[RMDB]
RNA sequence: GGGAACGACUCGAGUAGAGUCGAAAAAUACAAAAAUUAGCCAAGCAUGAUGAUGCACUCCUGUAGUCCCACCUACUCGGGAGGCUGAGAUGGGAGGAUGGCUUGAGCCCGGGAGGUUGAGGCUGCAGUGAGCCGAGAUUGCGCCACUGCACUCCAAGUGGUAUGGGGUAUUCGUACCCCAUACCACAAAAGAAACAACAACAACAAC
Reactivity to 2A3 in 0.01 (KOAc 150mM, MgCl2 10mM, bicine 150mM(pH8.5), 24C), signal-to-noise 2, nucleotides 027 to 156: a020u090a030c090a070a060a020a020a020u110u090a030g020c050c020a090a010g030c030a020u130g040a070u070g010a010u050g130c000a040c010u010c000c010u030g010u060a000g030u040c010c000c000a000c000c000u180a250c010u010c000g010g000g040a070g040g000c040u060g060a090g010a090u120g010g110g040a050g010g060a070u070g010g020c000u050u040g030a000g040c000c000c020g000g000g000a040g030g000u020u120g000a040g000g000c000u000g000c010a000g040u010g060a020g000c000c010g080a070g040a000u070u170g010c020g010c020c000a070c050u060g000c040a020c010u000c020c020a170a060